[RMDB]
RNA sequence: GGGAACGACUCGAGUAGAGUCGAAAAGCCGGGCGUUGUGGCGUGCGCCUGUAAUCCAGUUACUUGGAGGCUUGGGUUGGAGGACGGCGUGAGAUUGGGAGCCCUGUGGCGCUCUGCCCUAUGUCGAUCGGGCGUCCGCGCUAAGCUCGGCGUCAAUCGGUAAAAUACAGUUCGCUGUAUUUUACCGAAAAGAAACAACAACAACAAC
Reactivity to 2A3 in 0.01 (KOAc 150mM, MgCl2 10mM, bicine 150mM(pH8.5), 24C), signal-to-noise 5, nucleotides 027 to 156: g000c000c000g000g010g000c030g140u250u100g030u080g150g020c010g000u010g000c000g010c000c000u020g060u050a040a100u000c000c000a030g040u120u190a140c100u100u070g000g010a010g030g000c010u030u050g050g010g000u150u300g020g030a040g070g090a060c100g140g040c050g010u160g030a100g020a080u160u220g020g010g040a050g020c020c020c050u100g040u110g050g020c040g010c030u000c020u030g000c010c000c000u090a100u190g030u010c050g060a160u130c000g010g000g000c000g020u000c030c000g000c000g000c000u010a020a010g000c000u000c000g000g000c000g000u000c010a010a060u030
The record gives the reactivity of an RNA of 207 nucleotides to 2A3. The RNA was probed in 150 mM KOAc, 10 mM MgCl2 and 150 mM bicine (pH 8.5) at 24 C. Values cover nucleotides 27 to 156. It was measured as part of the RMDB library ARCHII.